The record gives the reactivity of an RNA of 177 nucleotides to DMS and 2A3. The data come from the RNA Mapping Database (RMDB), library OK2TST. The 2A3 profile rests on 1,422 reads. The RNA was probed in 150 mM KOAc, 10 mM MgCl2 and 150 mM bicine (pH 8.5) at 24 C.
[RMDB]
RNA sequence: GGGAACGACUCGAGUAGAGUCGAAAAUUCUUCCUUCUCGGACCGGAGACGGGCCUGAAAGAGGAAUAUCUUCAAACCUUGAAACAGGAUCUCACGAAGACACACGGGGCUAUCGAGGAGGAACACCGGACUAUCACCUUUUCGAAGGUGAUAGUCCAAAAGAAACAACAACAACAAC
Reactivity to DMS in 0.01 (KOAc 150mM, MgCl2 10mM, bicine 150mM(pH8.5), 24C), signal-to-noise 1, nucleotides 027 to 126: u000u000c100u000u010c000c000u000u000c000u000c090g010g000a110c030c020g000g010a150g010a120c210g000g000g020c000c000u000g010a050a130a300g000a020g040g010a070a030u000a030u000c150u000u060c120a070a120a080c030c030u000u000g000a160a080a210c050a010g000g000a030u000c040u010c080a150c040g000a080a110g020a140c220a080c140a130c040g000g010g000g000c190u000a070u000c030g000a050g000g020a070g000g000a060a070c160a160c110c090
Reactivity to 2A3 in 0.01 (KOAc 150mM, MgCl2 10mM, bicine 150mM(pH8.5), 24C), signal-to-noise 2, nucleotides 027 to 126: u020u040c010u030u060c000c010u010u000c030u000c030g020g020a040c000c030g070g000a110g040a100c040g030g040g000c000c000u030g030a130a040a040g040a020g030g030a080a150u090a160u070c210u210u020c050a060a130a120c010c000u030u060g010a120a100a030c010a010g080g050a210u030c010u060c040a110c130g070a130a070g130a060c040a010c010a030c070g010g030g070g040c050u060a040u220c010g010a020g000g040a030g010g020a050a000c010a050c010c040